Chemical mapping of a 207-nucleotide RNA with DMS and 2A3. The 2A3 profile rests on 3,267 reads. The data come from the RNA Mapping Database (RMDB), library OK3TST. The RNA was probed in 150 mM KOAc, 10 mM MgCl2 and 150 mM bicine (pH 8.5) at 24 C.
RNA sequence: GGGAACGACUCGAGUAGAGUCGAAAACAUCUUCAAGACGACGGCCGAUGCUGCUCGCCAGCUGGUCGGUACCGGCAUCGGCCAAGAGAUCGUCCCGCGCGAAGCAGUGUCGGACGCUCUGGUCAAUCGCCUCGUCGAGGACGCGGUGCUGCCUGGCCACUCCCAAUUUAUUCGUAAAUUGGGAGUGAAAAGAAACAACAACAACAAC
Reactivity to DMS in 0.01 (KOAc 150mM, MgCl2 10mM, bicine 150mM(pH8.5), 24C), signal-to-noise 2, nucleotides 027 to 156: c050a100u010c020u000u000c070a100a150g010a090c030g000a070c030g020g010c000c010g020a050u010g010c020u000g010c080u010c080g020c040c010a190g030c060u010g020g020u010c030g050g020u010a050c120c040g000g030c030a070u010c020g010g000c010c010a000a000g000a040g010a050u000c000g000u000c000c000c030g040c020g050c020g020a160a170g030c090a100g010u010g000u000c240g030g020a030c020g000c030u000c020u000g030g030u000c080a150a070u000c120g030c020c010u000c030g000u000c050g000a110g010g000a070c000g010c050g010g000u000g000c020u000g010c010c030u000g010g000c100
Reactivity to 2A3 in 0.01 (KOAc 150mM, MgCl2 10mM, bicine 150mM(pH8.5), 24C), signal-to-noise 3, nucleotides 027 to 156: c020a080u070c050u300u210c080a070a040g040a040c040g000a020c050g030g000c000c020g100a110u100g030c010u010g010c020u040c080g070c100c010a060g040c040u130g000g040u110c050g000g000u090a100c070c000g020g010c140a070u210c070g070g010c030c000a010a000g000a000g010a020u110c000g000u000c000c010c010g000c010g000c010g070a140a040g060c090a080g030u000g050u070c030g000g000a000c000g000c010u000c010u030g010g050u070c050a100a100u050c060g000c000c010u040c010g060u020c030g000a080g110g000a020c030g000c030g020g030u040g010c030u060g020c020c010u020g030g000c000